The record gives the reactivity of an RNA of 207 nucleotides to 2A3.
For 2A3 the reverse transcriptase was SuperScript II with manganese.
RNA sequence: GGGAACGACUCGAGUAGAGUCGAAAACGAUAACUCUUCGGAGUUAUCGAAAAAGAUAUGGAACUUAGUACAGGCAACAGCCAAUCUCGGAAACGAGAUUGGACAUGCCUGACUACUGGUUCCUAAGUCAAAAAACGGAUAGGUUCGCCUAUCCGAAGACGUCUUCUUGUUUCGACAAGAAGACGUCAAAAGAAACAACAACAACAAC
Reactivity to 2A3 in 0.01 (KOAc 150mM, MgCl2 10mM, bicine 150mM(pH8.5), 24C), signal-to-noise 2, nucleotides 027 to 156: c000g000a010u000a000a000c010u020c000u050u180c300g150g000a000g000u020u000a020u000c000g000a010a000a000a000a010g010a020u080a040u050g000g000a030a000c040u180u160a300g000u040a130c010a000g010g020c010a030a020c020a210g030c000c000a000a000u000c000u020c030g000g100a060a050a060c020g000a010g000a000u000u000g020g000a000c020a030u020g000c000c000u000g000a000c000u000a010c000u040g020g000u000u000c020c000u010a080a030g060u010c070a080a000a010a180a030a040c010g030g000a000u000a000g030g010u050u060c200g080c020c000u030a000u000c000c000g010a010a020